Structure probing data (2A3) for a 207-nucleotide construct.
The reactions ran in a buffer of 150 mM KOAc, 10 mM MgCl2 and 150 mM bicine (pH 8.5), at 24 C.
For 2A3, 525 sequencing reads were counted.
RNA sequence: GGGAACGACUCGAGUAGAGUCGAAAAUGCGGCAAGGUAGUCCUGGGUCCCUUUGGGGCUCCACCUUCACCGCUGUUAGGGGAGUUUUAUCCAGCGGCAGCAAAGGUGACCCGUGAUGGAGGCGGCCGGGAUAGCACAUAUCAGUCGGAUAAUCGUGACUCUUCUAGAACUUCGGUUCUAGAAGAGUAAAAGAAACAACAACAACAAC
Reactivity to 2A3 in 0.01 (KOAc 150mM, MgCl2 10mM, bicine 150mM(pH8.5), 24C), signal-to-noise 1, nucleotides 027 to 156: u020g000c010g030g030c030a050a040g040g010u040a030g090u080c010c030u090g140g000g160u110c000c050c000u000u000u010g020g000g000g030c050u020c010c000a000c000c000u000u010c050a030c010c030g010c010u000g020u110u190a180g000g000g090g000a070g060u090u150u210u050a060u050c010c000a020g070c030g020g010c030a050g010c040a070a000a030g010g020u120g070a300c020c010c010g020u090g070a110u110g090g050a040g000g030c110g000g020c000c010g000g000g000a040u110a090g060c150a020c030a050u110a000u030c070a010g020u070c020g030g020a050u050a120a090u160c020g010u030g050